[RMDB]
Chemical mapping of a 207-nucleotide RNA with 2A3. 2A3 adducts were read by reverse transcription with SuperScript II with manganese. The RNA was probed in 150 mM KOAc, 10 mM MgCl2 and 150 mM bicine (pH 8.5) at 24 C.
RNA sequence: GGGAACGACUCGAGUAGAGUCGAAAACAGAUUUCUUGUCGCACAGAUAGCAUGCCAAGCGCUGCUUGUAAAACAGCAACAAAAAUAACUGUAAACAACACAGAUUACGCUCCAGCUUACGCUAAAGCUGCGUGAGUUAAUCUCCUUUUGGAGCUGGGUCGGAAUGUAACUUCGGUUACAUUCCGACAAAAGAAACAACAACAACAAC
Reactivity to 2A3 in 0.01 (KOAc 150mM, MgCl2 10mM, bicine 150mM(pH8.5), 24C), signal-to-noise 1, nucleotides 027 to 156: c010a020g110a100u000u010u020c080u030u080g010u010c020g000c040a040c000a090g060a110u100a030g000c060a010u170g050c000c020a180a040g040c050g010c050u010g000c030u010u060g160u220a090a100a060a000c050a050g000c030a020a000c010a010a060a050a050a040u110a040a080c000u030g020u060a020a170a120c030a050a000c060a030c010a120g080a070u050u120a050c070g010c010u000c000c000a000g000c000u010u000a010c010g030c010u120a160a100a020g110c140u010g000c060g000u020g010a000g000u040u050a060a050u020c110u040c050c010u100u090u020u120g000g020a010g000c000u040g000g070